[RMDB]
RNA sequence: GGGAACGACUCGAGUAGAGUCGAAAAUUUGUAGUGGCAUGUUCUAGACCCGAAGCGGAGUGAUCUACCCAUGGCCAGGGUGAAGCGACGGUAAGACGUCGUGGAGGCCCGAACCCACUUAGGUUGAAUAUUGGGCUACUUUCGAGUAGCCCAAUAUAAAAGAAACAACAACAACAAC
Reactivity to 2A3 in 0.01 (KOAc 150mM, MgCl2 10mM, bicine 150mM(pH8.5), 24C), signal-to-noise 1, nucleotides 027 to 126: u100u070u160g110u050a030g040u020g020g060c060a060u050g120u070u110c020u050a010g020a060c000c040c000g050a060a000g050c010g000g020a050g020u040g030a050u030c000u050a090c020c000c030a160u090g070g000c000c010a070g020g000g000u050g010a020a000g010c000g010a000c010g000g010u000a010a030g100a090c000g000u030c000g050u000g000g010a040g150g000c000c000c000g000a020a020c000c030c000a060c050u140u170a160g040g040u050u060g030a040
Reactivity to DMS in 0.01 (KOAc 150mM, MgCl2 10mM, bicine 150mM(pH8.5), 24C), signal-to-noise 4, nucleotides 027 to 126: u010u020u010g020u000a010g020u000g020g000c080a040u000g010u010u000c040u010a070g000a120c020c010c010g010a070a100g010c060g000g000a090g000u010g000a110u040c040u000a080c030c050c020a050u000g000g040c020c020a200g000g000g010u000g000a250a240g000c020g000a020c020g010g020u010a110a190g000a300c030g000u000c000g020u020g000g000a240g000g020c020c000c000g000a100a140c080c000c080a100c130u010u000a060g000g020u000u000g010a120